[RMDB]
RNA sequence: GGGAACGACUCGAGUAGAGUCGAAAACAUAAUUAUCCUUGUGCCGUCCGGGAGUUCAGAUGUGAGGAUGAUAUGCUUAGUAACCACCUUAGAUUCAGUCCGCGUGUUAUUCUUUCAUGGCCGUGGAACGAUGAGCCACGUUCGCGUGGCUCAUCGUAAAAGAAACAACAACAACAAC
Reactivity to 2A3 in 0.01 (KOAc 150mM, MgCl2 10mM, bicine 150mM(pH8.5), 24C), signal-to-noise 1, nucleotides 027 to 126: c000a000u220a090a110u110u190a070u000c000c010u000u060g050u030g080c000c050g000u000c000c000g170g000g100a090g000u080u140c020a000g040a270u130g160u010g040a150g000g010a000u030g000a020u000a040u030g070c070u050u030a050g000u130a120a030c000c000a000c000c000u000u060a050g000a050u010u090c000a000g070u000c000c000g110c020g000u140g000u000u130a120u010u000c030u000u210u060c050a030u130g000g100c000c000g060u090g000g000a040
Chemical mapping of a 177-nucleotide RNA with 2A3. For 2A3, 442 sequencing reads were counted.